[RMDB]
RNA sequence: GGGAACGACUCGAGUAGAGUCGAAAAAAAAAAGAUAUGGACGUGAACUACAGGUUCGAAGCCCUUUGAUCUCAGCUCGGAAACGAGCUGAGGGAGGGUUAGAACCUGCACGUCCUAAGUCAAAAAACUUACAAUAGGAGUUCGCUCCUAUUGUAAGAAAAGAAACAACAACAACAAC
Reactivity to 2A3 in 0.01 (KOAc 150mM, MgCl2 10mM, bicine 150mM(pH8.5), 24C), signal-to-noise 1, nucleotides 027 to 126: a000a000a000a000a000a010g070a030u080a030u100g000g000a010c010g030u000g020a090a010c030u180a070c300a020g040g000u040u010c000g050a030a020g030c010c000c020u300u270u040g040a100u060c000u000c000a000g000c000u000c010g030g000a020a090a080c000g010a000g000c000u010g000a000g000g000g010a020g040g000g020u120u000a010g000a030a000c000c000u000g010c010a000c000g000u000c010c010u000a010a000g010u000c000a130a000a000a000a100a300
Reactivity to DMS in 0.01 (KOAc 150mM, MgCl2 10mM, bicine 150mM(pH8.5), 24C), signal-to-noise 2, nucleotides 027 to 126: a000a060a070a100a120a090g010a010u000a300u000g000g010a000c020g020u000g000a060a040c110u020a280c010a000g000g000u010u000c000g010a140a220g000c000c000c020u000u000u010g000a090u000c000u000c010a000g000c000u020c000g000g010a050a060a110c020g020a020g000c000u000g000a000g000g000g000a020g010g010g010u000u010a180g010a000a020c000c000u000g010c000a000c000g010u000c000c010u000a000a100g000u010c030a000a120a120a110a070a070

The record gives the reactivity of an RNA of 177 nucleotides to 2A3 and DMS. For 2A3, 2,394 sequencing reads were counted. 2A3 adducts were read by reverse transcription with SuperScript II with manganese. The DMS profile rests on 2,003 reads.